[RMDB]
RNA sequence: GGGAACGACUCGAGUAGAGUCGAAAAGUACAUCCAUGACUGGAGGCGCUACAUUAGCCAAGAUAUGAGAGAUUCAUGGGAUACGUUUACCGAACAUCAGAAGAGAAUCCUGUUUGAGAAUGCUCAAAUCAUUGCAGACGGAGAGGAAUGGGAAUGAUGGUUGGAAAUCAUUCGUGAUUUCCAACCAAAAAGAAACAACAACAACAAC
Reactivity to DMS in 0.01 (KOAc 150mM, MgCl2 10mM, bicine 150mM(pH8.5), 24C), signal-to-noise 2, nucleotides 027 to 156: g040u010a040c070a130u010c010c030a140u000g010a140c090u010g010g020a160g020g050c050g000c050u020a060c110a130u000u000a090g020c020c020a090a190g030a180u000a100u020g000a110g040a090g000a150u000u000c010a060u000g030g000g030a180u000a030c090g000u000u000u000a060c050c020g000a010a050c050a090u000c050a120g000a110a160g000a070g010a100a080u010c030c010u040g010u000u010u000g020a100g010a050a050u000g010c060u000c030a050a030a150u010c020a090u010u020g010c050a080g010a090c000g000g000a090g000a060g000g000a060a100u000g000g000g020a100a080u000g010a100
Background: This 207-nucleotide RNA was probed chemically with DMS. The RNA was probed in 150 mM KOAc, 10 mM MgCl2 and 150 mM bicine (pH 8.5) at 24 C.